[RMDB]
RNA sequence: GGGAACGACUCGAGUAGAGUCGAAAAGGGGUCCAAAGUUGUCAGGCAGGCUAUUAGACGAAGAACAGUGGCUGAAGCCUCCACGGCCACUGGGAGUCUAACGCCUGCCUUGGAUUUACUUUGGACGGAGGCACCCAAACCAAUGUUCGCAUUGGAAGAGGAUAAUACCGUUCGCGGUAUUAUCCUCAAAAGAAACAACAACAACAAC
Reactivity to 2A3 in 0.01 (KOAc 150mM, MgCl2 10mM, bicine 150mM(pH8.5), 24C), signal-to-noise 1, nucleotides 027 to 156: g030g010g030g000u000c020c000a000a000a000g000u010u020g070u050c080a060g000g010c000a000g000g000c000u050a220u300u020a120g000a050c090g140a300a020g000a020a010c000a000g000u010g000g010c010u030g020a100a010g040c000c000u020c000c000a020c000g000g010c000c000a000c000u000g000g000g000a000g000u000c000u010a070a000c100g040c000c020u010g000c000c000u000u100g010g000a000u020u000u150a020c000u020u000u000g010g000a010c010g000g000a000g000g000c000a050c000c000c000a030a070a040c000c000a000a000u000g030u020u050c210g000c110a010u080u110g020g020a120a000
Structure probing data (2A3) for a 207-nucleotide construct. The reactions ran in a buffer of 150 mM KOAc, 10 mM MgCl2 and 150 mM bicine (pH 8.5), at 24 C. Reactivities are given for positions 27 through 156. High 2A3 reactivity points to a flexible backbone, as in loops and unpaired stretches. Source: RMDB library RNAMAK, as collected in RNAgym.